[RMDB]
RNA sequence: GGGAACGACUCGAGUAGAGUCGAAAAGUCUCCUAGAGAGCUUGGCCGUCGGGCCUUACACCCCGACUUGCUGAGUUUCUCUAGGAGAGUCCCUUUCCCAGCCAGAGGUGGCUGGUCAAACCAUACCAAAACUCUUGCUAGUUCGCUAGCAAGAGAAGUAUGACAAAUACUUCGGUAUUUGUCAUACAAAAGAAACAACAACAACAAC
Reactivity to 2A3 in 0.01 (KOAc 150mM, MgCl2 10mM, bicine 150mM(pH8.5), 24C), signal-to-noise 2, nucleotides 027 to 156: g010u000c000u000c000c000u010a010g000a010g000a000g000c000u010u000g000g000c000c000g030u000c000g010g030g030c020c050u070u110a100c080a040c010c000c000c000g020a010c040u140u280g000c000u030g000a000g010u010u300u010c000u000c000u000a000g040g000a000g000a000g000u000c010c000c000u020u070u010c000c010c000a000g000c000c000a050g010a050g130g110u020g000g010c000u020g000g000u040c030a030a070a070c080c000a060u100a100c020c020a020a080a120a150c000u000c000u000u000g010c010u000a010g020u040u040c160g020c110u010a000g000c000a000a000g000a000g000a010a010